RNA sequence: GGGAACGACUCGAGUAGAGUCGAAAAAAAAUGAGUGCGUGGUAGCACAAACCAGACCAAUCUUCGGCACAUGGUCGCACAAGUACAGCUUGGCCUGUACAAAGCGAACAACAACAACAACAAGCAACACCAAUUAUGGGUUCGCCCAUAAUUGGUGAAAAGAAACAACAACAACAAC
Reactivity to DMS in 0.01 (KOAc 150mM, MgCl2 10mM, bicine 150mM(pH8.5), 24C), signal-to-noise 1, nucleotides 027 to 126: a000a010a010a030u010g000a170g070u010g000c060g000u010g000g010u010a140g040c030a010c050a080a110a040c030c030a110g020a160c040c000a140a060u000c160u020u000c040g040g000c070a100c200a210u000g000g000u010c010g000c000a060c100a020a100g000u000a000c000a030g000c030u010u030g000g000c090c000u000g040u000a010c000a070a060a050g030c020g040a040a010c040a050a030c090a000a000c030a000a000c060a050a000c030a030a120g000c300a100a100
Reactivity to 2A3 in 0.01 (KOAc 150mM, MgCl2 10mM, bicine 150mM(pH8.5), 24C), signal-to-noise 1, nucleotides 027 to 126: a000a000a000a160u140g010a000g020u020g000c030g000u070g090g050u170a040g050c030a020c020a100a000a000c020c010a020g090a040c000c020a030a100u010c060u000u130c030g070g000c030a050c060a180u080g050g000u060c020g000c010a100c040a170a040g000u000a020c000a000g020c030u160u260g100g000c020c010u000g000u000a000c000a020a060a030g030c010g040a020a000c000a000a000c000a000a000c000a030a010c000a000a000c040a030a000g080c040a090a050

The record gives the reactivity of an RNA of 177 nucleotides to DMS and 2A3. The reactions ran in a buffer of 150 mM KOAc, 10 mM MgCl2 and 150 mM bicine (pH 8.5), at 24 C. Values cover nucleotides 27 to 126. For DMS the reverse transcriptase was MarathonRT. For 2A3, 1,449 sequencing reads were counted.